An RNA of 207 nucleotides, treated with 2A3 and DMS and read out base by base. Source: RMDB library OK3TST, as collected in RNAgym.
[RMDB]
RNA sequence: GGGAACGACUCGAGUAGAGUCGAAAAUGGUGUGUAGAUUGAAGGGGAGAAGUGGAGGUACUUUUUCAGUCAUUCCUCUCAGCCUUCUAUUGCUGAGGGCAAACUAGCCCUGGGAAAGCAAUAUUGUGAUUCACGUCUUAGAUUUCUCCUCUCCACACUAGUAAGGUUCCUUCGGGAACCUUACUAGAAAAGAAACAACAACAACAAC
Reactivity to 2A3 in 0.01 (KOAc 150mM, MgCl2 10mM, bicine 150mM(pH8.5), 24C), signal-to-noise 2, nucleotides 027 to 156: u100g010g000u000g000u030g010u010a020g020a300u090u180g070a040a020g020g010g000g000a070g000a070a020g040u100g060g020a010g010g000u080a040c000u060u160u050u110u090c020a000g000u050c030a070u040u080c020c010u000c010u000c030a040g040c000c000u170u020c090u120a080u030u110g000c000u010g010a040g030g000g000c020a080a120a110c070u120a040g030c020c000c030u000g060g050g020a070a120a010g000c060a030a030u060a130u160u210g080u100g100a090u120u120c080a040c090g070u010c050u070u050a120g000a130u030u080u000c000u000c010c000u000c030u000c000c000a040c000a010
Reactivity to DMS in 0.01 (KOAc 150mM, MgCl2 10mM, bicine 150mM(pH8.5), 24C), signal-to-noise 2, nucleotides 027 to 156: u020g010g000u000g010u000g030u010a120g000a300u010u000g040a080a030g030g000g020g000a140g030a050a050g030u000g010g010a050g050g000u010a050c050u010u010u010u010u000c020a060g010u000c040a210u000u000c080c020u000c040u010c040a030g000c010c110u000u000c050u000a080u010u000g020c020u010g010a020g000g020g040c030a030a080a090c160u000a220g000c080c040c030u000g010g040g000a020a030a030g020c000a030a050u000a060u000u010g030u030g020a150u010u000c070a050c050g020u010c040u000u000a130g020a190u000u000u000c000u000c020c020u010c020u000c020c000a050c080a190